[RMDB]
RNA sequence: GGGAACGACUCGAGUAGAGUCGAAAACUGGCGCCCAUCCAAGGACAAAUUAAUUGGGAACACUAUGCAUCCCGCAGUCUCCAUCCACCCGAAUCUGCCGCCUAUUGUUCUACCAACAGUCAAGAAGCUAUUGAGAGUCAUUCGUGACUCUCAAUAGAAAAGAAACAACAACAACAAC
Reactivity to DMS in 0.01 (KOAc 150mM, MgCl2 10mM, bicine 150mM(pH8.5), 24C), signal-to-noise 4, nucleotides 027 to 126: c050u000g000g010c040g010c020c020c020a070u010c010c030a060a100g020g010a080c110a050a080a140u050u050a100a110u010u010g000g000g000a060a130c120a070c110u020a090u020g000c120a070u000c020c000c010g030c080a060g000u020c020u010c020c020a040u010c030c020a030c030c020c020g020a070a060u010c050u000g010c050c010g010c020c030u000a080u020u030g010u000u000c030u010a110c030c020a060a060c110a080g010u020c090a070a070g030a130a080g010
Reactivity to 2A3 in 0.01 (KOAc 150mM, MgCl2 10mM, bicine 150mM(pH8.5), 24C), signal-to-noise 9, nucleotides 027 to 126: c030u020g040g000c020g010c000c000c000a020u040c020c000a040a060g100g030a050c070a080a090a100u250u180a060a100u140u140g030g020g010a080a010c040a030c090u120a080u210g010c020a040u060c020c000c000g010c020a010g020u010c000u000c050c010a050u010c010c010a010c020c010c010g020a020a060u030c020u030g010c010c010g020c010c000u050a090u040u090g030u010u000c020u040a090c000c030a040a040c010a050g100u080c030a020a070g060a130a010g110
The record gives the reactivity of an RNA of 177 nucleotides to DMS and 2A3. Values cover nucleotides 27 to 126. The RNA was probed in 150 mM KOAc, 10 mM MgCl2 and 150 mM bicine (pH 8.5) at 24 C. For DMS the reverse transcriptase was MarathonRT.